RNA sequence: GGGAACGACUCGAGUAGAGUCGAAAAGCCAGUAGCGCCAUGGCCAGACGGUACCGAGGUACGAGCGCAGGCCGUACCGGCCAGUCUCGGAUCCGCAGGCGCAGGCCCGUACAUAGUGCGCGCGCGCACACUUCAGGGGGUUCGCCCCCUGAAGUGUAAAAGAAACAACAACAACAAC
Reactivity to 2A3 in 0.01 (KOAc 150mM, MgCl2 10mM, bicine 150mM(pH8.5), 24C), signal-to-noise 3, nucleotides 027 to 126: g050c010c020a050g110u120a040g000c000g020c030c030a090u130g010g020c010c020a020g020a050c010g020g030u100a150c020c080g080a120g010g020u030a020c020g020a090g160c070g030c080a060g230g000c000c000g030u030a060c000c030g000g010c030c030a040g020u000c000u040c100g100g020a160u160c030c040g030c200a180g000g010c000g000c020a000g020g020c000c000c050g010u040a030c030a150u250a050g050u040g040c000g000c020g000c030g010c000g020c060
Reactivity to DMS in 0.01 (KOAc 150mM, MgCl2 10mM, bicine 150mM(pH8.5), 24C), signal-to-noise 6, nucleotides 027 to 126: g010c010c010a150g020u010a110g020c020g010c000c030a280u000g000g010c000c020a060g000a070c040g000g020u000a080c110c050g010a110g030g020u000a030c010g000a120g020c050g010c250a060g010g010c000c010g010u000a020c070c050g020g000c040c030a180g000u000c010u000c110g020g000a110u010c010c010g000c170a170g010g020c010g020c030a070g000g000c020c020c030g010u000a060c080a100u000a080g020u000g010c030g020c160g020c180g030c050g020c110